[RMDB]
RNA sequence: GGGAACGACUCGAGUAGAGUCGAAAAGGUCGGAGCUUCGGCUCCGACCAAAGCAGGAUUACCAAUUCCCAGCAAGCAGCAGCAGCAAGCAAGCAGCAAGCAAAACCAUUACGUUCGCGUAAUGGAACAUAGUCCAACUGUUCGCAGUUGGACUAUGAAAAGAAACAACAACAACAAC
Reactivity to DMS in 0.01 (KOAc 150mM, MgCl2 10mM, bicine 150mM(pH8.5), 24C), signal-to-noise 2, nucleotides 027 to 126: g000g020u000c000g000g030a010g010c010u000u040c210g020g000c010u000c000c000g020a000c000c000a000a010a020g000c140a080g010g010a100u010u020a070c100c050a070a300u000u000c000c000c000a170g020c090a040a100g000c020a020g000c030a040g000c060a050g000c060a060a090g030c030a050a040g030c000a060g030c090a050a080g010c180a040a050a090a140c000c000a020u010u020a000c000g020u000u020c220g020c010g010u000a010a000u000g000g000a060a120
Reactivity to 2A3 in 0.01 (KOAc 150mM, MgCl2 10mM, bicine 150mM(pH8.5), 24C), signal-to-noise 1, nucleotides 027 to 126: g020g010u000c010g000g040a020g010c030u150u140c300g120g020c010u020c000c000g000a010c020c000a000a000a000g030c010a020g070g060a130u110u110a040c020c000a020a030u040u000c000c000c000a020g010c010a050a010g000c000a000g000c010a000g010c000a000g000c000a050a040g020c000a010a030g030c020a010g060c030a050a040g040c010a010a030a030a100c000c000a000u000u010a010c010g040u050u090c210g010c010g120u000a000a000u000g030g000a010a010